[RMDB]
RNA sequence: GGGAACGACUCGAGUAGAGUCGAAAAUCGCUGCAACAUUAUUUGAGUAUCCUGAAAACGGGCUUUUCAGAAUGGUGUUGCCGUAUAAAAUUGUAGGAGUGCAUAGUGGCCCGUAUAGCAGGCAUUAGAGAGCUACAGAUGUUCGCAUCUGUAGCAACUUUGGAAUACAGUUCGCUGUAUUCCAAAGAAAAGAAACAACAACAACAAC
Reactivity to DMS in 0.01 (KOAc 150mM, MgCl2 10mM, bicine 150mM(pH8.5), 24C), signal-to-noise 2, nucleotides 027 to 156: u000c040g010c050u030g000c010a020a040c020a020u000u010a080u000u000u000g010a240g000u010a050u000c030c000u010g000a050a020a050a090c050g020g020g110c060u000u000u000u000c050a110g000a040a030u000g010g010u000g000u000u000g010c000c050g000u000a100u000a070a080a110a100u000u000g020u000a080g000g020a150g020u000g000c020a070u000a120g030u000g000g010c010c010c020g050u000a090u000a060g020c040a050g030g010c060a040u000u000a090g010a180g010a140g030c010u000a000c000a010g010a020u000g020u000u010c290g020c020a010u010c000u010g030u000a010g010c000a000a000
Reactivity to 2A3 in 0.01 (KOAc 150mM, MgCl2 10mM, bicine 150mM(pH8.5), 24C), signal-to-noise 3, nucleotides 027 to 156: u080c000g010c020u010g020c000a010a020c000a000u030u070a050u050u110u060g030a060g030u090a080u180c010c020u040g050a030a040a030a040c060g000g000g000c020u160u080u120u100c060a060g040a120a010u010g020g000u000g000u000u000g000c000c000g030u030a040u070a050a120a050a080u170u140g070u120a050g000g100a050g040u070g030c060a050u050a130g070u060g110g020c000c020c010g030u050a020u040a070g060c050a020g010g000c010a010u020u080a070g060a020g000a020g080c000u000a000c000a000g000a010u000g030u040u060c140g000c070a000u000c000u000g000u000a000g010c000a000a000

An RNA of 207 nucleotides, treated with DMS and 2A3 and read out base by base. For 2A3, 1,733 sequencing reads were counted. For 2A3 the reverse transcriptase was SuperScript II with manganese.